[RMDB]
RNA sequence: GGGAACGACUCGAGUAGAGUCGAAAAUAAUGGAACUAUGGGACGAUUAUCCAGAGCUGAAUGAAGUGAACGUCCGUACAACACUAGGUAAUUUCCUUUUUUCAGAUGAUGAUGUACUAAAAAAUGAGCUCAUACCCUAUUUCGAUAGGGUAUGAGCAAAAGAAACAACAACAACAAC
Reactivity to DMS in 0.01 (KOAc 150mM, MgCl2 10mM, bicine 150mM(pH8.5), 24C), signal-to-noise 2, nucleotides 027 to 126: u020a070a160u030g000g010a100a080c210u010a080u000g010g020g040a080c160g010a120u000u010a100u000c020c080a120g000a120g010c060u000g020a080a070u000g010a040a040g030u050g000a060a110c080g000u030c010c050g020u000a020c150a060a120c080a040c090u000a030g020g010u000a080a120u000u010u000c010c000u010u030u000u000u000u000c060a080g010a100u010g000a150u000g000a070u000g010u010a030c090u020a000a010a110a070a050a130u010g010a280
Reactivity to 2A3 in 0.01 (KOAc 150mM, MgCl2 10mM, bicine 150mM(pH8.5), 24C), signal-to-noise 1, nucleotides 027 to 126: u150a010a050u070g060g000a000a050c050u050a130u130g060g000g040a020c100g030a030u080u030a050u080c010c010a000g030a030g180c030u040g010a080a110u110g020a060a070g010u050g180a040a000c010g000u000c020c040g020u050a040c030a110a010c000a070c070u050a010g040g020u160a000a100u030u020u030c000c000u000u040u000u050u000u110c050a050g080a230u050g000a020u040g040a010u030g110u060a070c030u160a130a070a040a000a000a070u110g040a030